RNA sequence: GGGAACGACUCGAGUAGAGUCGAAAAGAUAUGGAAAGUCCACGAUGCCCUUUGAUCUCGGAUCGGAAACGAUCCGAGGGAGGGUAAGUGGAGCUUUCCUAAGUCAAAACCACACUUCGGUGUGGAAGAUGUAUUGGGACUUCGGUCCCAAUACAUCAAAAGAAACAACAACAACAAC
Reactivity to DMS in 0.01 (KOAc 150mM, MgCl2 10mM, bicine 150mM(pH8.5), 24C), signal-to-noise 1, nucleotides 027 to 126: g000a100u000a300u050g000g000a000a000a000g000u000c000c010a000c020g030a170u010g010c000c000c000u010u000u050g000a020u010c000u000c000g020g000a000u000c000g030g010a060a110a190c000g000a000u000c000c000g000a000g020g030g010a000g030g060g020u000a000a180g000u010g000g000a070g000c010u000u000u000c000c000u000a030a090g000u000c010a140a060a090a270c000c010a000c000a000c000u000u010c220g000g000u000g010u000g000g000a060a050
Reactivity to 2A3 in 0.01 (KOAc 150mM, MgCl2 10mM, bicine 150mM(pH8.5), 24C), signal-to-noise 1, nucleotides 027 to 126: g010a010u110a000u070g020g010a010a030a000g010u000c000c020a010c020g160a160u300g050c010c010c000u290u300u040g070a060u040c010u010c000g000g000a010u020c020g000g010a070a060a010c000g000a000u000c000c040g000a010g000g000g010a010g020g000g030u060a020a040g010u010g020g030a010g000c000u030u000u030c000c000u000a110a020g000u010c040a010a030a120a210c000c000a000c010a010c010u060u090c300g160g000u010g000u030g000g000a010a020